RNA sequence: GGGAACGACUCGAGUAGAGUCGAAAAGAUAUGGAGAUUGCUGCUUUUGACGGCUUGUGGUCGGAAACGACCAAACAAGCCGAUAAGCAGGAUCUCCUAAGUCAAAAUCCCACGUUCGCGUGGGAAAGUGUUUAGACUAGUUCGCUAGUCUAAACACAAAAGAAACAACAACAACAAC
Reactivity to DMS in 0.01 (KOAc 150mM, MgCl2 10mM, bicine 150mM(pH8.5), 24C), signal-to-noise 3, nucleotides 027 to 126: g000a030u000a300u010g000g010a030g000a030u000u000g030c020u000g020c000u000u000u000u000g020a260c180g010g000c010u010u000g020u000g000g000u010c010g000g000a080a050a140c010g010a020c000c010a010a060a120c020a000a010g020c020c000g020a030u010a010a010g020c000a010g000g000a010u010c010u000c000c000u000a000a070g010u000c030a090a130a130a200u000c000c000c010a040c010g010u000u020c190g020c010g050u000g010g010g000a000a020a080
Reactivity to 2A3 in 0.01 (KOAc 150mM, MgCl2 10mM, bicine 150mM(pH8.5), 24C), signal-to-noise 4, nucleotides 027 to 126: g030a020u050a020u130g020g010a010g010a020u080u140g300c010u020g000c040u100u200u300u290g300a220c140g020g000c000u010u000g020u010g000g010u000c000g020g000a020a040a040c000g000a010c030c000a030a070a000c000a000a000g010c000c010g020a020u030a020a000g010c000a000g000g010a000u000c000u010c000c000u010a030a000g010u000c010a030a030a040a290u010c000c010c010a000c000g030u070u100c300g010c020g120u030g010g020g000a060a040a040